[RMDB]
RNA sequence: GGGAACGACUCGAGUAGAGUCGAAAACACCUUUGGCACAAGGGCAAGCAGUAGAAACCAUGCGUGCUUGCUAGAGCUGGAAAUGAUGCUGGUAGCAUUGCAUGGUUCAGGGAUCACAGAUCUCGUGGCUUGAACCAGAGUUCGCUCUGGUUCAAGCAAAAGAAACAACAACAACAAC
Reactivity to 2A3 in 0.01 (KOAc 150mM, MgCl2 10mM, bicine 150mM(pH8.5), 24C), signal-to-noise 3, nucleotides 027 to 126: c070a050c010c000u090u090u080g060g000c010a000c040a100a030g010g030g030c030a060a010g030c010a020g080u250a020g070a020a010a000c000c000a000u000g000c000g000u020g010c000u040u010g000c040u040a040g010a000g090c040u040g040g180a000a080a220u200g050a070u130g050c000u020g000g090u000a000g000c000a020u090u290g000c000a000u030g040g000u000u000c000a000g020g000g000a020u030c050a070c040a300g000a040u000c020u000c020g160u020g100
Reactivity to DMS in 0.01 (KOAc 150mM, MgCl2 10mM, bicine 150mM(pH8.5), 24C), signal-to-noise 1, nucleotides 027 to 126: c100a120c030c010u000u050u010g020g010c010a020c060a060a030g030g000g010c050a030a030g040c120a060g010u030a070g000a150a040a020c000c000a020u010g010c000g000u000g000c000u000u000g020c010u000a040g000a050g010c000u000g000g030a180a200a110u030g020a070u030g000c040u010g000g000u000a030g000c000a020u040u050g010c010a000u000g000g030u030u000c070a120g000g000g000a030u020c050a160c180a150g000a040u000c000u000c050g000u050g010